[RMDB]
RNA sequence: GGGAACGACUCGAGUAGAGUCGAAAAUUUGACGGGUUUCGCGAUUUGCGAACAGUCUAACGGAUUGUGUUCGUUGUCGACGAAACCUGCCUUAAGAAACGAAUAAUCUCGUUCGCGAGAUUAUUCGGCAAGGUGUUAACUUCGGUUAACACCUUGCAAAAGAAACAACAACAACAAC
Reactivity to DMS in 0.01 (KOAc 150mM, MgCl2 10mM, bicine 150mM(pH8.5), 24C), signal-to-noise 1, nucleotides 027 to 126: u010u000u020g000a040c000g000g000g000u000u000u000c000g040c010g010a020u000u020u030g000c000g030a010a010c000a030g010u000c010u000a090a230c300g000g000a030u000u030g000u010g020u000u000c000g020u000u000g020u000c010g010a180c010g000a010a000a010c000c000u000g000c030c000u010u010a070a150g000a080a080a210c010g000a000a010u000a000a000u000c000u000c000g000u010u020c240g010c010g010a000g000a010u000u000a000u000u000c010g020
Reactivity to 2A3 in 0.01 (KOAc 150mM, MgCl2 10mM, bicine 150mM(pH8.5), 24C), signal-to-noise 2, nucleotides 027 to 126: u080u040u120g060a020c010g000g000g010u000u000u000c010g000c010g000a000u020u060u300g010c000g000a010a000c010a000g020u020c010u050a170a090c170g110g000a030u050u130g190u030g010u140u000c000g000u020u030g000u000c000g020a300c000g000a030a000a000c000c000u000g000c010c000u100u020a230a040g120a080a100a010c020g000a000a000u000a000a000u010c000u010c020g050u050u050c210g010c000g040a000g000a010u010u000a010u010u000c000g000